Chemical mapping of a 177-nucleotide RNA with 2A3 and DMS.

RNA sequence: GGGAACGACUCGAGUAGAGUCGAAAAUUGCUGUGAUGGCAUUUGGCAGAAGCGCGCUAACCGCGCCCUUUGCGAUGCUUGUUACAGGAGAAGUGUCCGGUUCGAUCCCUGCGUGGGUUAUCCACGGGUACUAUCCUAUCUUCGGAUAGGAUAGUACAAAAGAAACAACAACAACAAC
Reactivity to 2A3 in 0.01 (KOAc 150mM, MgCl2 10mM, bicine 150mM(pH8.5), 24C), signal-to-noise 4, nucleotides 027 to 126: u080u060g070c010u020g000u010g020a020u010g020g000c000a020u040u030u200g230g000c030a040g020a140a000g020c020g000c000g000c110u060a080a040c080c040g000c000g020c000c000c050u050u030u020g000c020g000a010u010g000c030u110u220g040u010u050a020c010a000g030g050a050g070a110a000g130u090g030u040c020c010g010g020u020u050c030g010a060u020c010c000c000u020g020c030g010u020g020g100g000u190u150a100u060c010c010a020c000g030g030
Reactivity to DMS in 0.01 (KOAc 150mM, MgCl2 10mM, bicine 150mM(pH8.5), 24C), signal-to-noise 6, nucleotides 027 to 126: u010u010g010c010u000g010u010g010a030u000g010g010c000a010u000u000u010g030g050c020a030g000a020a040g010c300g020c000g010c060u010a140a150c300c190g010c000g010c010c030c020u000u000u000g010c010g000a010u000g000c000u000u010g030u000u000a020c010a020g000g010a090g010a080a090g010u000g010u000c030c020g020g000u000u000c040g000a100u000c010c010c010u010g010c010g020u000g000g000g010u010u010a060u010c010c010a010c020g010g010
Notes: The data come from the RNA Mapping Database (RMDB), library RFMREP. The 2A3 profile rests on 6,690 reads. For DMS, 10,089 sequencing reads were counted.